[RMDB]
RNA sequence: GGGAACGACUCGAGUAGAGUCGAAAAAGCCGUUUCAUUCCGUAACGCUUGGCUUGCUUCGCGUAGUCGAGCAUUAGACGCUUGAAGUUUUGCGCCCAUCUCGGCAUUCGCUGUGCCGGCUUGUCUUACCUGAUUUGCUAAGUUCUUAGCGUCGGCCGUACAGAGUUUGAUUCGUCAAACUCUGUACAAAAGAAACAACAACAACAAC
Reactivity to DMS in 0.01 (KOAc 150mM, MgCl2 10mM, bicine 150mM(pH8.5), 24C), signal-to-noise 2, nucleotides 027 to 156: a030g030c010c020g060u000u000u010c040a130u010u000c080c040g020u010a040a050c040g000c020u000u000g010g030c000u000u000g030c050u000u010c180g010c070g040u000a070g040u000c000g000a000g030c080a070u000u000a070g020a060c030g030c000u060u000g000a090a160g010u000u000u010u010g020c040g020c020c010c030a050u000c020u000c010g020g040c020a130u000u010c120g020c090u010g020u000g050c010c010g020g030c020u000u000g020u020c040u000u000a080c060c030u000g000a140u000u000u000g040c020u000a070a100g010u000u000c080u000u000a070g030c010g030u000c020g010g020c040c100
Reactivity to 2A3 in 0.01 (KOAc 150mM, MgCl2 10mM, bicine 150mM(pH8.5), 24C), signal-to-noise 6, nucleotides 027 to 156: a010g070c020c010g010u020u030u060c080a080u120u050c060c040g050u040a070a030c050g000c020u030u030g020g000c010u020u050g010c020u100u150c150g010c050g040u050a030g000u030c010g010a010g000c000a020u040u120a060g040a030c010g020c050u040u070g060a090a040g070u090u080u150u120g020c020g000c000c030c010a060u040c060u040c030g030g000c030a060u130u090c050g010c080u110g020u030g020c010c000g010g000c010u010u070g020u040c020u050u060a080c020c020u070g070a140u130u070u150g020c020u040a070a040g060u150u080c050u100u090a010g000c000g000u010c010g030g000c020c010
Structure probing data (DMS and 2A3) for a 207-nucleotide construct. It was measured as part of the RMDB library OK3TST. Values cover nucleotides 27 to 156. The reactions ran in a buffer of 150 mM KOAc, 10 mM MgCl2 and 150 mM bicine (pH 8.5), at 24 C.